Chemical mapping of a 207-nucleotide RNA with 2A3 and DMS. It was measured as part of the RMDB library OK3TST. Conditions: 150 mM KOAc, 10 mM MgCl2 and 150 mM bicine (pH 8.5), 24 C.
RNA sequence: GGGAACGACUCGAGUAGAGUCGAAAAUGGUGAUUAGAAAUAGUUAAGGCAGAUUCUAGGCUGCAAGGUUUAGGCUUUGAAAUCACUCCCCUGUUCUAUAUGCCUGCAAAUGAGGUCACAGACAGUGAGAUGCAAGGCUGUGCCUUUGGAAAUCACAACCUCCACUAUUAUUCGUAAUAGUGGAGGUAAAAGAAACAACAACAACAAC
Reactivity to 2A3 in 0.01 (KOAc 150mM, MgCl2 10mM, bicine 150mM(pH8.5), 24C), signal-to-noise 3, nucleotides 027 to 156: u110g060g010u020g010a000u020u040a080g140a050a140a070u130a060g070u170u090a090a030g070g000c020a010g000a030u110u050c080u190a060g180g000c000u020g000c040a030a030g040g010u030u090u190a050g000g020c000u110u010u060g060a080a120a030u070c020a040c050u070c000c010c010c000u010g030u130u030c040u030a070u000a040u300g010c000c000u000g040c020a020a040a220u210g030a050g010g010u050c020a020c010a080g010a010c010a020g020u020g020a020g000a030u110g000c020a020a010g040g000c030u050g040u050g040c000c000u020u050u050g040g060a030a070a020u050c010a020c000a050
Reactivity to DMS in 0.01 (KOAc 150mM, MgCl2 10mM, bicine 150mM(pH8.5), 24C), signal-to-noise 3, nucleotides 027 to 156: u000g010g030u000g000a080u000u010a140g010a160a060a170u010a090g010u020u020a100a090g020g030c020a080g010a120u010u010c100u000a070g010g010c030u000g000c080a070a100g020g000u000u000u010a100g020g000c030u000u000u010g000a060a060a110u000c030a090c070u000c020c000c030c020u000g010u010u000c040u010a130u000a150u000g020c010c000u010g000c060a070a060a130u010g000a040g020g020u000c230a030c050a080g010a020c030a070g020u010g020a080g000a110u010g000c050a050a060g020g030c010u000g010u000g020c020c020u010u020u000g020g000a070a050a090u000c030a020c040a100